This 207-nucleotide RNA was probed chemically with 2A3 and DMS.
The reactions ran in a buffer of 150 mM KOAc, 10 mM MgCl2 and 150 mM bicine (pH 8.5), at 24 C.
It was measured as part of the RMDB library M2RFPK.
Reactivities are given for positions 27 through 156.
DMS adducts were read by reverse transcription with MarathonRT.
[RMDB]
RNA sequence: GGGAACGACUCGAGUAGAGUCGAAAAGCUUCCGUCGAACGCGAAAGUCGGACGGCGGCCAUGAGUAGCAACGCAAAGCCGCGGCAAGUGGAGUUAGCGAGAAGAGACUAGGCUUUGGUUUCUUCAAAUUAGUGAGUGUGGUUCGCCACACUCACAAGUUUGCACAUAUCUUCGGAUAUGUGCAAACAAAAGAAACAACAACAACAAC
Reactivity to 2A3 in 0.01 (KOAc 150mM, MgCl2 10mM, bicine 150mM(pH8.5), 24C), signal-to-noise 2, nucleotides 027 to 156: g010c020u130u030c010c000g000u000c000g000a070a010c000g040c030g130a290a150a020g080u220c010g020g000a040c010g000g010c000g030g000c020c010a110u120g030a010g110u160a030g020c090a050a090c040g000c060a000a140a000g030c030c010g030c030g040g050c090a140a020g020u050g030g040a080g000u100u080a040g050c030g030a090g010a070a000g020a000g000a010c020u010a020g020g040c000u050u050u050g020g030u020u000u000c010u020u010c020a000a050a070u220u120a040g010u000g000a000g000u010g000u010g000g040u030u060c120g050c040c000a010c000a000c010u000c000a000c000a000a010
Reactivity to DMS in 0.01 (KOAc 150mM, MgCl2 10mM, bicine 150mM(pH8.5), 24C), signal-to-noise 1, nucleotides 027 to 156: g010c010u000u010c000c000g000u000c020g000a060a100c060g010c060g030a120a120a210g020u000c000g030g030a140c000g000g010c000g000g040c010c070a070u020g030a100g020u000a070g020c000a120a120c010g040c010a070a100a090g000c020c000g020c060g040g040c070a060a140g050u000g030g010a120g000u000u000a130g050c030g000a150g030a070a030g000a060g020a020c020u000a070g010g060c090u000u000u010g000g010u000u000u000c020u000u010c020a060a070a180u000u000a140g000u010g020a070g040u000g050u010g020g010u010u010c210g040c020c010a000c000a030c000u000c000a000c020a010a060
For DMS, 2,072 sequencing reads were counted.